The record gives the reactivity of an RNA of 207 nucleotides to 2A3 and DMS. The reactions ran in a buffer of 150 mM KOAc, 10 mM MgCl2 and 150 mM bicine (pH 8.5), at 24 C. It was measured as part of the RMDB library M2RFPK.
RNA sequence: GGGAACGACUCGAGUAGAGUCGAAAACUGGUUGAAGUGGCUUCUCCUGGGCGAUCGCUCGCUGUUUUUGUGGCUGGCUUUCAGGGGGCUGGAGGAGCCGGGAGCGGAGGCGGAGGACCGAGCCAAAGAUGCUAUGUUCACUUCGGUGAACAUAGAACUAUUGCUCUAAGUUCGCUUAGAGCAAUAGAAAAGAAACAACAACAACAAC
Reactivity to 2A3 in 0.01 (KOAc 150mM, MgCl2 10mM, bicine 150mM(pH8.5), 24C), signal-to-noise 2, nucleotides 027 to 156: c040u030g070g040u060u100g080a110a020g000u080g080g050c010u010u000c000u060c030c000u040g010g020g050c070g070a080u060c100g030c050u040c040g020c030u100g130u100u100u030u050u210g050u100g070g000c010u010g000g010c020u040u100u120c110a080g060g020g000g030g000c030u030g000g000a000g030g010a020g010c020c000g000g010g000a020g000c060g000g020a010g060g000c090g000g030a030g030g000a000c010c050g010a000g040c030c020a020a090a000g110a010u100g020c000u000a010u000g010u000u010c000a000c020u040u070c190g030g000u000g000a000a000c000a010u000a000g000a000a000
Reactivity to DMS in 0.01 (KOAc 150mM, MgCl2 10mM, bicine 150mM(pH8.5), 24C), signal-to-noise 1, nucleotides 027 to 156: c030u000g020g020u000u000g010a100a190g010u000g020g020c000u000u000c010u000c010c020u020g020g010g000c040g000a070u000c140g000c040u010c220g030c020u000g010u010u000u010u000u010g000u000g030g040c020u000g000g010c040u010u020u000c010a170g000g030g040g020g020c030u000g000g020a130g040g000a070g030c010c020g020g010g010a120g020c020g010g010a140g020g020c050g020g010a150g000g020a070c040c030g010a100g020c030c020a050a070a100g000a100u010g010c010u010a030u000g010u000u010c010a010c010u000u010c300g090g000u010g000a010a020c010a000u010a010g000a050a090
DMS adducts were read by reverse transcription with MarathonRT. The 2A3 profile rests on 1,230 reads.